Structure probing data (2A3) for a 207-nucleotide construct. Reactivities are rounded to 0.1 and cut off at 0 and 3. The reactions ran in a buffer of 150 mM KOAc, 10 mM MgCl2 and 150 mM bicine (pH 8.5), at 24 C.

[RMDB]
RNA sequence: GGGAACGACUCGAGUAGAGUCGAAAACCUGACGGAUUAUGGGCCUGGGCCUGUAUGUGCCACUUGCCGGCCUGCCCGUUCCGAGUUGGUUGUGGCUGGUGGGGCUCGGGCGAAGGCCUGGGCCUCUCUAGACCUGAAGCGGCAGGCAUGGCGUGAGGUUACCUAAACUGUUCGCAGUUUAGGUAACAAAAGAAACAACAACAACAAC
Reactivity to 2A3 in 0.01 (KOAc 150mM, MgCl2 10mM, bicine 150mM(pH8.5), 24C), signal-to-noise 2, nucleotides 027 to 156: c030c000u040g090a070c130g050g030a000u040u150a070u160g030g030g030c070c100u270g040g110g060c020c000u070g140u080a070u110g150u110g070c030c000a050c030u050u150g000c000c000g000g020c000c000u020g030c000c000c040g020u140u050c020c000g010a130g140u170u190g120g020u130u110g090u070g040g020c000u000g000g000u010g000g000g000g000c020u000c010g000g020g000c030g000a010a010g270g030c030c000u000g000g000g000c010c000u000c000u000c000u000a040g000a150c000c000u040g020a100a030g000c070g010g070c000a000g000g040c020a100u130g000g010c030g000u030g070a070g040